Background:
Chemical mapping of a 207-nucleotide RNA with 2A3.

[RMDB]
RNA sequence: GGGAACGACUCGAGUAGAGUCGAAAAGCAGUAUCUCGUUAGGCGAGGCACCUAUACAAACACAGGUUGCUGAUCUGACGACGUCGAGAGACGCCCAAGAUUAGGACAGGAUAUAUCGAACCAAGGUGAACCUGUCCAGGGUUCGCCCUGGACAGAACACAUGCUCGAGGUUCGCCUCGAGCAUGUGAAAAGAAACAACAACAACAAC
Reactivity to 2A3 in 0.01 (KOAc 150mM, MgCl2 10mM, bicine 150mM(pH8.5), 24C), signal-to-noise 1, nucleotides 027 to 156: g100c090a000g020u020a150u050c060u040c030g040u010u110a050g040g050c050g050a150g090g000c010a060c040c000u060a050u040a130c160a020a210a030c110a010c060a010g060g010u190u130g120c020u000g010a060u000c000u030g000a000c000g010a000c000g010u000c000g000a000g000a000g020a020c000g060c030c000c030a060a040g050a120u050u070a050g000g000a010c030a040g040g080a000u020a030u030a050u230c090g030a010a050c030c100a100a040g130g000u050g080a030a110c000c000u020g000u030c000c000a000g000g030g000u010u090c240g180c010c000c000u000g000g000a000c000a000g000a000a000